This 177-nucleotide RNA was probed chemically with 2A3 and DMS. For DMS, 1,561 sequencing reads were counted. It was measured as part of the RMDB library OK2TST.
RNA sequence: GGGAACGACUCGAGUAGAGUCGAAAAUGCCAGUGUUGCUGCCACACAAAUCCAGCAUGCACCAGCAACAGGCUUGAAUGAGAUUGGUACCGUUGCUGCCAGCAAUGCCGGUACAUUAACUGAAUUACAUUCUCGUGCGUUUCGACGCACGAGAAUGAAAAGAAACAACAACAACAAC
Reactivity to 2A3 in 0.01 (KOAc 150mM, MgCl2 10mM, bicine 150mM(pH8.5), 24C), signal-to-noise 2, nucleotides 027 to 126: u080g000c020c010a070g040u000g000u030u060g000c010u000g000c030c040a070c000a000c020a060a080a070u100c060c030a020g000c020a060u080g000c020a030c030c020a020g000c000a000a070c030a060g100g040c010u100u110g090a120a110u150g020a060g100a200u120u080g140g000u070a060c000c020g010u060u080g000c030u070g050c010c000a010g000c020a050a050u130g060c060c010g000g040u010a030c010a070u090u080a050a050c060u090g060a100a060u100u050a080
Reactivity to DMS in 0.01 (KOAc 150mM, MgCl2 10mM, bicine 150mM(pH8.5), 24C), signal-to-noise 2, nucleotides 027 to 126: u010g020c000c010a120g030u010g010u000u010g010c000u000g000c180c040a150c130a050c080a060a070a120u020c100c020a030g050c050a070u000g000c040a080c140c030a020g010c050a000a040c070a110g010g000c060u000u010g020a110a070u000g010a130g010a100u010u000g000g010u000a070c040c040g000u000u000g040c050u000g020c180c070a090g000c000a060a020u000g010c090c020g010g000u010a020c060a050u000u000a060a090c100u000g000a100a090u040u000a130
2A3 adducts were read by reverse transcription with SuperScript II with manganese.